[RMDB]
RNA sequence: GGGAACGACUCGAGUAGAGUCGAAAAGAUAUGGAUAUGUCUACGCAGCUUGGACCCUAGUCAGAGAACCUAUCGGAAACGAUAGGUUCUCUGACUAGGCUAGCUGUCGUAGAGCAUAUCCUAAGUCCACAAAGUACAGGUUCGCCUGUACUUUGUGAAAAGAAACAACAACAACAAC
Reactivity to DMS in 0.01 (KOAc 150mM, MgCl2 10mM, bicine 150mM(pH8.5), 24C), signal-to-noise 1, nucleotides 027 to 126: g000a090u010a300u000g010g000a010u000a010u000g010u010c000u000a000c000g000c020a010g000c000u000u030g030g010a170c300c040c010u000a000g000u010c020a000g000a030g010a000a000c000c010u010a000u010c000g050g000a130a080a260c000g010a030u000a010g000g020u000u000c000u000c000u000g020a020c000u000a000g020g020c020u010a010g010c010u000g010u020c020g050u000a000g020a040g020c000a010u000a000u000c000c010u020a030a070g010u010c030